[RMDB]
RNA sequence: GGGAACGACUCGAGUAGAGUCGAAAACGCAGUCGGAGGCAGCACCACUGCCUCGGCUAUCGUCGCACUUCUGCCCCUCAUCACGUUCUUUGUCAUGCUUUUGGCCGUUAAAGCAAAAGCAUAUGUUUCCGGCCUCACAGCCCUCGCCGUUGCCAUAGAUCAGCAGUACUUUCGAGUACUGCUGAUCAAAAGAAACAACAACAACAAC
Reactivity to 2A3 in 0.01 (KOAc 150mM, MgCl2 10mM, bicine 150mM(pH8.5), 24C), signal-to-noise 1, nucleotides 027 to 156: c100g000c030a000g020u020c020g210g110a070g030g020c000a020g030c060a050c180c010a080c010u000g010c000c000u010c000g000g000c000u010a050u250c060g100u000c160g060c040a090c070u210u010c090u170g020c000c000c000c060u090c040a160u060c030a060c080g020u120u000c030u000u100u070g000u200c030a030u000g020c000u040u150u000u010g150g220c000c010g060u140u210a140a090a010g020c000a020a030a020a000g010c000a020u000a030u080g030u000u020u010c090c050g000g030c000c020u100c080a110c030a000g000c020c000c040u050c000g000c030c030g000u040u030g020c020c030a030u130a080

Structure probing data (2A3) for a 207-nucleotide construct. Conditions: 150 mM KOAc, 10 mM MgCl2 and 150 mM bicine (pH 8.5), 24 C. 2A3 is a SHAPE reagent: it acylates the 2'-hydroxyl of flexible nucleotides of all four kinds.